[RMDB]
RNA sequence: GGGAACGACUCGAGUAGAGUCGAAAAGAUAUGGAUAAGCAUGGGACGAUGAAAUCGGAAACGAUGGAGUCUCCAUGAACUACUUAUCCUAAGUCAAAACUAGUGAUCGGUUCGCCGAUCACUAGAAGUAUCCUUCAUUGUUCGCAAUGAAGGAUACAAAAGAAACAACAACAACAAC
Reactivity to 2A3 in 0.01 (KOAc 150mM, MgCl2 10mM, bicine 150mM(pH8.5), 24C), signal-to-noise 4, nucleotides 027 to 126: g020a010u060a030u180g000g000a000u000a010a010g000c010a010u010g020g000g200a090c150g060a140u060g010a050a000a020u010c000g010g000a080a060a030c010g000a010u000g010g010a020g000u000c000u000c040c000a000u000g010a000a040c040u210a020c000u020u010a010u000c000c000u000a170a030g060u020c030a000a000a120a210c000u000a000g000u010g000a000u000c000g030g060u060u090c300g040c090c000g000a000u000c010a000c000u010a000g000a000a000
Reactivity to DMS in 0.01 (KOAc 150mM, MgCl2 10mM, bicine 150mM(pH8.5), 24C), signal-to-noise 5, nucleotides 027 to 126: g010a050u000a300u000g010g020a000u010a000a010g000c000a010u000g000g010g010a020c110g000a050u010g000a170a150a010u000c000g010g010a130a090a230c000g000a010u000g040g000a280g000u000c000u010c010c000a010u000g000a060a020c080u010a300c010u000u000a000u000c000c010u010a050a150g000u000c030a080a080a100a180c000u000a000g000u000g000a000u000c000g000g000u000u010c200g010c010c000g020a000u000c000a000c010u000a000g010a040a070